[RMDB]
RNA sequence: GGGAACGACUCGAGUAGAGUCGAAAAGGAUAAAAGGUGCCAUCGCAGCCAGAAGUCGGUGCCUGAGAUGUGGCUCUGGAUGUGGCCGAGACUCCUGCUCCGGCUGCAAUCUAUGUAUGUGCAUCUACAUCCCAUGGGGUUUCGACCCCAUGGGAUGAAAAGAAACAACAACAACAAC
Reactivity to 2A3 in 0.01 (KOAc 150mM, MgCl2 10mM, bicine 150mM(pH8.5), 24C), signal-to-noise 1, nucleotides 027 to 126: g120g020a090u130a150a150a040a060g020g020u000g010c020c010a020u010c100g000c080a020g050c000c060a030g020a100a010g040u070c080g000g000u100g000c020c030u060g050a030g020a000u090g050u120g090g000c000u000c010u030g100g010a090u090g040u070g050g000c020c000g020a040g020a040c010u050c020c020u040g040c040u000c020c000g020g020c000u000g010c020a040a090u010c010u090a060u190g130u050a000u010g040u140g000c000a000u000c000u040a090
Reactivity to DMS in 0.01 (KOAc 150mM, MgCl2 10mM, bicine 150mM(pH8.5), 24C), signal-to-noise 1, nucleotides 027 to 126: g010g020a120u010a050a100a190a080g010g000u000g020c010c010a020u000c060g020c100a030g010c030c030a080g010a070a090g010u000c120g030g060u000g020c050c060u000g010a100g020a050u000g030u000g010g010c000u020c050u000g010g020a070u010g020u000g020g000c010c000g000a170g010a050c040u000c020c040u000g000c050u010c000c010g000g000c000u000g020c020a050a100u000c100u000a030u010g020u000a040u000g010u010g000c020a010u010c010u000a150